RNA sequence: GGGAACGACUCGAGUAGAGUCGAAAAGAUUCCUCGUUGUUGAGCCAGGUUUAAACAAAUCGACCACACAAACGUAGAGCCGACUACGGAUUUAUAAAUUAAGGCAUUAAGUGUGAUAAGGAGACAAAAAACGAUGUUGUGUUCGCACAACAUCGAACAGGGAUACAUACUUCGGUAUGUAUCCCUGAAAAGAAACAACAACAACAAC
Reactivity to DMS in 0.01 (KOAc 150mM, MgCl2 10mM, bicine 150mM(pH8.5), 24C), signal-to-noise 1, nucleotides 027 to 156: g010a300u000u000c000c010u010c070g010u010u000g020u000u010g000a130g040c070c000a090g020g030u040u040u020a080a080a120c120a010a040a120u010c010g000a060c030c030a060c020a220c010a110a070a110c000g000u010a020g010a170g000c000c030g040a100c010u000a000c020g030g010a300u000u000u000a080u010a040a020a120u000u000a020a040g030g020c040a260u000u000a030a120g030u010g020u000g030a070u010a050a080g080g020a180g000a150c050a010a020a110a030a020a160c010g010a010u000g020u000u010g020u000g000u000u000c300g070c020a040c040a000a010c000a010u000c010g040a010a070

This 207-nucleotide RNA was probed chemically with DMS.
Reactivities are rounded to 0.1 and cut off at 0 and 3.
In probing experiments dimethyl sulfate is read out at A N1 and C N3, which are open when not base-paired.
For DMS the reverse transcriptase was MarathonRT.
The reactions ran in a buffer of 150 mM KOAc, 10 mM MgCl2 and 150 mM bicine (pH 8.5), at 24 C.